The record gives the reactivity of an RNA of 177 nucleotides to 2A3 and DMS. It was measured as part of the RMDB library OK1LIB. As a SHAPE reagent, 2A3 marks flexible, mostly unpaired nucleotides at the ribose 2'-OH. 2A3 adducts were read by reverse transcription with SuperScript II with manganese.
RNA sequence: GGGAACGACUCGAGUAGAGUCGAAAACUCGAAAGAGACCUGCAUAUCUUAGGCAGAUGAACAAGUCACGUCUGAAAAGCGAAAGCCCUAAGAUAUGCAGCUGUGAUGACUUGGCGCAGAAAAUAAAACCAUGAUGGUAUUUCGAUACCAUCAUGGUAAAAGAAACAACAACAACAAC
Reactivity to 2A3 in 0.01 (KOAc 150mM, MgCl2 10mM, bicine 150mM(pH8.5), 24C), signal-to-noise 9, nucleotides 027 to 126: c000u000c010g030a020a050a010g090a010g030a060c000c010u000g000c000a000u000a000u000c000u000u000a000g000g000c000a000g000a010u010g010a050a050c000a010a000g010u010c010a010c100g010u000c010u020g120a230a200a140a030g020c020g060a060a030a010g010c000c000c000u000a000a000g000a000u000a000u000g000c000a000g010c010u020g000u010g010a040u110g000a000c000u000u000g000g000c010g000c010a010g090a040a100a020a040u240a020a090a010
Reactivity to DMS in 0.01 (KOAc 150mM, MgCl2 10mM, bicine 150mM(pH8.5), 24C), signal-to-noise 4, nucleotides 027 to 126: c000u000c000g000a070a070a110g000a020g000a130c300c000u000g000c010a000u000a010u000c010u010u000a000g040g020c030a010g000a010u000g010a090a160c010a040a020g010u000c000a300c030g010u000c000u000g000a130a040a070a140g020c010g020a130a060a140g000c000c010c010u000a030a000g010a000u000a000u000g000c010a010g030c010u000g030u010g000a030u030g010a000c010u010u010g010g010c010g000c000a020g010a130a070a080a100u050a060a060a120